The data come from the RNA Mapping Database (RMDB), library OK1LIB. An RNA of 177 nucleotides, treated with DMS and 2A3 and read out base by base. 2A3 adducts were read by reverse transcription with SuperScript II with manganese. The DMS profile rests on 1,021 reads. Conditions: 150 mM KOAc, 10 mM MgCl2 and 150 mM bicine (pH 8.5), 24 C.

RNA sequence: GGGAACGACUCGAGUAGAGUCGAAAAGUAGGUGCAUCUUAUAUACCUAUCGAUAUUGAUUUUCCGAAUAAACGACAAGGUGCAAUUUUGGAGGAUGCUAAAGUAACUGCAGUCAUGUCUUACGGCGGUGCAAGGCAAGAUUCGUCUUGCCUUGCACAAAAGAAACAACAACAACAAC
Reactivity to DMS in 0.01 (KOAc 150mM, MgCl2 10mM, bicine 150mM(pH8.5), 24C), signal-to-noise 1, nucleotides 027 to 126: g000u020a000g010g000u030g100c120a080u010c060u050u130a180u000a040u030a050c000c000u000a160u000c030g000a060u000a100u030u000g000a050u030u050u000u000c000c000g050a050a030u040a000a080a300c100g020a040c070a030a070g000g050u040g000c050a050a040u020u000u000u000g000g000a110g000g000a070u030g000c030u020a080a080a180g000u050a000a090c100u050g000c050a050g000u040c020a050u050g030u000c000u000u000a150c090g000g000c180g000
Reactivity to 2A3 in 0.01 (KOAc 150mM, MgCl2 10mM, bicine 150mM(pH8.5), 24C), signal-to-noise 2, nucleotides 027 to 126: g080u090a060g050g080u020g000c000a000u000c080u090u030a120u070a020u030a300c020c000u010a010u100c000g020a060u080a150u260u160g120a120u000u000u160u230c040c060g000a060a030u040a170a050a030c060g040a000c050a250a000g000g010u000g060c040a090a080u130u100u000u260g070g060a010g010g000a000u000g000c000u020a140a000a120g010u000a120a000c000u040g020c020a020g000u000c000a020u180g040u000c000u090u150a060c070g030g000c000g120